[RMDB]
RNA sequence: GGGAACGACUCGAGUAGAGUCGAAAACGUUGUCAUCGACAACACCCUAUGCAUUCAUGCUCUGUAAGGAUGCGCCGAAAGGUGGGCAAGCCCGAGUUGCCCAGACCUGAAAUGCAACACUUUAGAGAAAACCCGAAGCAGUUCGCUGCUUCGGGAACUACGUUUCCCAGUUCGCUGGGAAACGUAGAAAAGAAACAACAACAACAAC
Reactivity to 2A3 in 0.01 (KOAc 150mM, MgCl2 10mM, bicine 150mM(pH8.5), 24C), signal-to-noise 1, nucleotides 027 to 156: c040g010u000u000g000u000c060a260u130c300g000a000c000a010a000c020a040c010c010c010u140a190u140g070c060a070u100u110c070a000u220g010c000u020c000u040g120u140a000a010g000g000a010u010g000c010g000c020c010g140a130a010a010g000g000u010g000g000g020c000a000a000g120c050c110c020g180a110g140u000u030g000c000c020c000a050g120a100c000c000u040g040a080a030a030u070g000c020a030a000c020a020c290u070u120u100a030g000a000g020a170a030a000a020c000c010c000g000a000a000g010c000a000g050u030u060c180g030c110u000g000c000u000u000c000g010g000g000a000a000